[RMDB]
RNA sequence: GGGAACGACUCGAGUAGAGUCGAAAACCAUAGGAUGUUCUCUUAUAAAGCUUAUUAUGCUUCCAGAGGACAGUGGCAGGUGUAAGACACGAAGCACAACUAACUCAAAAGAGUUCCCUCUUGGGACCGUUAGUUCACCAUUGCUAUCUUCCUAUGAAUCGUAGGGGUAGUUCGCUACCCCUACGAUAAAAGAAACAACAACAACAAC
Reactivity to 2A3 in 0.01 (KOAc 150mM, MgCl2 10mM, bicine 150mM(pH8.5), 24C), signal-to-noise 2, nucleotides 027 to 156: c020c000a000u000a000g010g010a020u040g000u020u000c010u000c010u040u010a140u220a300a030a030g020c030u120u250a110u300u100a140u300g000c000u030u000c040c040a020g000a010g010g030a010c070a040g020u020g040g000c000a000g030g000u020g000u120a190a100g070a040c090a010c210g100a090a040g040c090a020c020a070a030c010u030a030a010c000u020c210a040a000a140a130g120a080g030u130u040c000c000c040u070c150u120u260g020g000g020a030c010c010g010u010u000a000g010u000u040c000a010c030c050a050u090u010g010c000u010a050u080c030u060u000c000c000u000a010u020g020a040